[RMDB]
RNA sequence: GGGAACGACUCGAGUAGAGUCGAAAAGGCUAGGUGGUAUUCCGGUGUGGGAUACUUGGUAAUAUGUAACGCUAAUUGCAUAAGAUUGUAGUACGGAAUUUACAGUCUUGGUUUUUAUAAACCUGAAAAAAGGAAUUACACUUCGGUGUAAUUCCAAGACAACGUGCUAGUUCGCUAGCACGUUGUCAAAAGAAACAACAACAACAAC
Reactivity to 2A3 in 0.01 (KOAc 150mM, MgCl2 10mM, bicine 150mM(pH8.5), 24C), signal-to-noise 1, nucleotides 027 to 156: g050g000c050u000a060g010g030u000g100g030u080a110u000u000c020c000g030g190u130g070u200g050g020g040a040u050a050c030u010u100g030g050u100a040a020u050a090u190g050u050a060a000c060g030c110u080a120a030u100u010g010c050a020u060a080a000g040a000u010u000g000u000a060g070u000a070c070g120g020a050a010u100u100u000a050c000a000g000u010c010u010u050g040g010u000u020u000u020u080a140u230a060a050a000c000c020u050g150a100a000a000a000a030a030g020g000a000a000u000u020a000c000a010c000u020u050c190g000g000u000g000u000a000a000u020u010c000c000a000a000

This 207-nucleotide RNA was probed chemically with 2A3. It was measured as part of the RMDB library M2RFPK. Conditions: 150 mM KOAc, 10 mM MgCl2 and 150 mM bicine (pH 8.5), 24 C.